[RMDB]
RNA sequence: GGGAACGACUCGAGUAGAGUCGAAAACGAUGCCUCUGUUGUCCUAGCAGAUGUGGUGCUAAACGGCCUCAAGCCUAGGGUAACGGAGCGUCGAUUGAGCAUGUGCAUCAAUGCUGGACACAGGCGGAUAUGUAAUUUCGUUCGCGAGAUUGCAUAUAAAAGAAACAACAACAACAAC
Reactivity to DMS in 0.01 (KOAc 150mM, MgCl2 10mM, bicine 150mM(pH8.5), 24C), signal-to-noise 9, nucleotides 027 to 126: c020g000a020u010g000c150c010u000c010u000g000u000u000g000u000c000c000u000a010g010c030a150g010a150u020g010u010g000g010u010g010c050u020a060a120a170c300g000g000c000c000u000c010a000a120g010c140c010u000a010g000g000g000u000a010a020c030g000g000a000g000c030g010u000c000g000a130u010u010g000a080g010c020a040u010g010u010g000c060a080u010c050a080a080u020g000c080u010g000g000a100c080a030c040a040g000g020c060g010g000
Reactivity to 2A3 in 0.01 (KOAc 150mM, MgCl2 10mM, bicine 150mM(pH8.5), 24C), signal-to-noise 9, nucleotides 027 to 126: c010g010a010u030g010c010c020u000c010u000g010u020u010g000u000c000c000u010a000g000c010a010g000a080u060g030u020g000g010u050g080c020u090a120a030a030c050g040g000c000c000u010c010a000a010g010c000c010u010a020g000g000g010u010a010a000c010g010g000a000g000c010g000u000c000g010a070u020u090g030a010g000c020a020u020g020u050g040c000a030u020c010a030a100u100g010c030u040g030g010a010c010a000c000a010g020g000c000g000g020